[RMDB]
RNA sequence: GGGAACGACUCGAGUAGAGUCGAAAAGGAGAUCGAAGAUGACCGACGUCAGCACGGUCCGGAUGUAGGUCCGCAUGCAUCCGAGUUGACGAAACUUAACGAUUUCCAAAGCGGACAAGAAGUCAAAACUAGGGCGAUUAUUCGUAAUCGCCCUAGUAAAAGAAACAACAACAACAAC
Reactivity to DMS in 0.01 (KOAc 150mM, MgCl2 10mM, bicine 150mM(pH8.5), 24C), signal-to-noise 2, nucleotides 027 to 126: g010g040a000g010a000u000c000g010a160a120g000a260u020g020a060c010c040g000a210c040g000u040c150a070g090c110a090c140g010g000u000c030c000g000g000a000u000g060u000a020g000g000u000c000c050g030c040a080u010g000c010a020u000c020c020g000a050g000u040u010g040a140c210g000a190a010a000c000u020u010a200a140c010g000a000u000u020u000c000c010a050a080a090g000c000g020g000a000c010a250a100g040a080a120g010u020c050a050a060a090
Reactivity to 2A3 in 0.01 (KOAc 150mM, MgCl2 10mM, bicine 150mM(pH8.5), 24C), signal-to-noise 2, nucleotides 027 to 126: g060g000a020g000a000u020c020g040a010a060g080a150u070g020a010c000c040g080a070c090g160u300c070a040g070c130a020c020g020g000u000c000c030g000g010a000u000g000u000a000g000g000u000c000c000g040c000a010u000g000c000a000u000c000c000g000a020g020u020u040g040a080c150g070a100a010a000c010u020u000a040a010c010g000a000u000u000u000c000c010a000a080a000g010c000g010g000a000c000a000a030g120a100a000g030u300c200a040a060a000
The record gives the reactivity of an RNA of 177 nucleotides to DMS and 2A3.
It was measured as part of the RMDB library OK1LIB.
The reactions ran in a buffer of 150 mM KOAc, 10 mM MgCl2 and 150 mM bicine (pH 8.5), at 24 C.
The DMS profile rests on 2,660 reads.
Reactivities are given for positions 27 through 126.
For DMS the reverse transcriptase was MarathonRT.